[RMDB]
RNA sequence: GGGAACGACUCGAGUAGAGUCGAAAAUAGCAGGACAUAGCCGUUGUGCGCGAAGCGGUGUAGCGUCACUUUGAUGGCGGUACUAUGAAUUGAUGCAAGGUGUGGAGCGACCUUAAACAGUUCUGGUUUGACGGCUUUCAGUUCGCUGAAAGCCGAAGCCAAACAAGAGGUUCGCCUCUUGUUUGGCAAAAGAAACAACAACAACAAC
Reactivity to 2A3 in 0.01 (KOAc 150mM, MgCl2 10mM, bicine 150mM(pH8.5), 24C), signal-to-noise 4, nucleotides 027 to 156: u120a010g040c030a000g010g020a020c010a040u030a010g010c000c020g020u050u080g060u060g050c040g020c030g050a080a020g050c040g040g030u110g020u050a010g060c020g060u110c070a030c080u190u160u220g170a200u210g060g010c020g020g000u040a080c030u030a040u070g060a090a080u090u050g040a040u070g050c060a030a010g020g000u020g020u090g020g010a000g010c000g000a020c000c000u060u160a070a010a000c000a030g000u030u000c000u030g050g040u030u050u130g070a010c010g000g000c000u000u000u000c000a020g020u020u070c220g020c090u000g000a000a000a000g000c000c010g000a000a010
Overview
The data come from the RNA Mapping Database (RMDB), library M2RFPK. This 207-nucleotide RNA was probed chemically with 2A3. The reactions ran in a buffer of 150 mM KOAc, 10 mM MgCl2 and 150 mM bicine (pH 8.5), at 24 C.